This 207-nucleotide RNA was probed chemically with 2A3.
Reactivities are rounded to 0.1 and cut off at 0 and 3.
Source: RMDB library OK3TST, as collected in RNAgym.
The RNA was probed in 150 mM KOAc, 10 mM MgCl2 and 150 mM bicine (pH 8.5) at 24 C.
RNA sequence: GGGAACGACUCGAGUAGAGUCGAAAAGGAGCUCGAGUUGUUCUUAGGUCAACUAAGGGCAACUGUAUGUUCUUAAGGUGUUUAAGGGCAUAUAGUAGUGUGUAGUUGACCUACACAUUAUUAAUAGGUUAUAAACACCUUAUGGCCUGUUCGAGCACGAUUCGUGAAUGUUCGCAUUCACGAGUCGAAAAGAAACAACAACAACAAC
Reactivity to 2A3 in 0.01 (KOAc 150mM, MgCl2 10mM, bicine 150mM(pH8.5), 24C), signal-to-noise 4, nucleotides 027 to 156: g120g020a050g010c010u000c010g010a010g000u000u000g000u010u000c000u000u000a000g000g000u040c020a020a010c040u010a020a030g080g080g050c030a090a010c040u010g010u010a020u020g010u000u010c000u010u020a010a020g010g000u050g030u050u020u000a020a010g020g010g000c030a010u020a010u030a000g040u060a220g110u020g030u030g060u130a010g000u020u070g010a000c000c000u000a000c000a000c000a020u120u240a050u070u120a100a050u030a080g010g000u010u010a020u010a030a020a000c020a020c010c000u010u000a010u020g000g000c000c010u020g030u110u100c110g050a030g080c060a020